[RMDB]
RNA sequence: GGGAACGACUCGAGUAGAGUCGAAAACUUCGCCACGUCGAUUUGCUCGUUUUGCGAGAGCAGUUUGCCGAUGGAUUCACGAAUAGAAGGAUGCCAGCUCACGGCACGACUCACCGCGUCGUUGAGCUGGUCCUCGUCCAUUCGUGGACGAGGACCAAAAAGAAACAACAACAACAAC
Reactivity to DMS in 0.01 (KOAc 150mM, MgCl2 10mM, bicine 150mM(pH8.5), 24C), signal-to-noise 4, nucleotides 027 to 126: c030u020u010c060g010c010c030a060c030g010u000c000g000a010u020u010u000g010c030u010c010g030u010u030u040u040g020c220g000a140g020a010g020c010a040g000u000u000u020g010c080c060g000a090u000g010g000a220u020u000c070a030c060g010a030a040u000a040g010a050a020g000g000a090u010g010c000c000a010g010c010u010c000a050c000g000g000c000a040c000g010a130c210u060c110a090c160c020g000c090g000u000c000g010u010u000g010a010g000c020
Reactivity to 2A3 in 0.01 (KOAc 150mM, MgCl2 10mM, bicine 150mM(pH8.5), 24C), signal-to-noise 8, nucleotides 027 to 126: c010u050u030c030g020c020c010a030c000g000u010c000g010a050u030u060u080g000c010u010c080g180u080u030u200u280g200c160g080a140g010a000g040c010a000g010u000u030u090g030c050c050g100a260u030g000g020a080u080u110c040a020c060g030a020a030u070a080g030a060a020g020g020a020u100g060c000c010a010g010c020u020c020a030c040g010g000c010a000c010g080a060c020u090c120a060c090c000g000c000g000u010c010g030u050u070g000a010g000c010